[RMDB]
RNA sequence: GGGAACGACUCGAGUAGAGUCGAAAAACGUACCAGCUACGGCUGGUACGACAGCGAUAUGAUGGCAUACCAUCUUUCGGGACUGACUUUUACAGUGGAGAUGUUUUACCCUUAACUGAUCGCUCAAUAAGGUGUUACCAUUCGUGGUAACACCUUAAAAAGAAACAACAACAACAAC
Reactivity to 2A3 in 0.01 (KOAc 150mM, MgCl2 10mM, bicine 150mM(pH8.5), 24C), signal-to-noise 4, nucleotides 027 to 126: a000c010g000u000a000c010c000a000g000c020u020a060c220g120g000c020u000g000g000u000a000c000g000a010c010a010g060c000g040a030u030a030u160g090a050u050g030g020c070a060u090a270c010c000a000u020c000u010u090u060c050g050g000g100a040c050u040g030a030c040u030u130u100u110a070c060a060g010u090g060g030a060g000a030u070g060u030u070u040u140a120c010c000c000u040u080a060a050c040u090g040a060u050c030g010c020u060c070a050a070
Reactivity to DMS in 0.01 (KOAc 150mM, MgCl2 10mM, bicine 150mM(pH8.5), 24C), signal-to-noise 4, nucleotides 027 to 126: a140c000g010u000a000c000c000a010g000c000u000a130c210g040g030c010u000g000g010u000a000c000g000a080c160a020g020c000g030a030u010a070u020g020a060u010g010g020c260a090u010a140c200c000a020u000c020u000u000u010c040g030g010g000a100c080u000g010a140c140u000u010u020u040a080c050a040g020u020g000g010a040g020a050u010g000u020u000u010u030a140c090c010c030u010u020a080a150c130u010g010a060u010c050g020c020u000c110a040a120